[RMDB]
RNA sequence: GGGAACGACUCGAGUAGAGUCGAAAAUUAAAUAACGUGAAAAAGCAGAAGGAGGACUGCAAGGACACGAACCACCAAACAUCAUAAACAGCAAGGAGGAGCUGAAGGAGAUGAACCACCAAAAAAACAUUCAUUUUGGAUUCGUCCAAAAUGAAUGAAAAGAAACAACAACAACAAC
Reactivity to 2A3 in 0.01 (KOAc 150mM, MgCl2 10mM, bicine 150mM(pH8.5), 24C), signal-to-noise 2, nucleotides 027 to 126: u040u020a010a040a070u150a110a030c030g050u030g110a080a070a000a000a060g000c030a010g030a070a020g090g030a010g000g010a020c000u000g010c030a000a030g040g010a010c000a000c050g030a050a030c000c020a000c020c010a120a030a030c030a030u090c010a020u100a090a080a030c020a010g000c030a040a040g020g020a020g010g000a030g030c020u040g020a060a010g020g010a040g010a000u020g030a020a000c020c010a020c030c060a010a070a010a030a030a020a050
Reactivity to DMS in 0.01 (KOAc 150mM, MgCl2 10mM, bicine 150mM(pH8.5), 24C), signal-to-noise 2, nucleotides 027 to 126: u040u010a070a100a070u020a160a090c030g010u010g000a050a100a100a150a110g060c070a060g010a080a110g000g020a180g020g020a170c010u000g010c010a030a050g000g030a300c100a040c040g000a090a130c080c040a080c060c090a010a060a050c120a020u000c020a030u010a070a090a040c060a030g000c050a070a040g000g000a160g000g010a110g000c040u020g020a040a070g000g000a060g010a050u000g000a080a100c020c040a080c070c150a010a000a070a090a010a000a120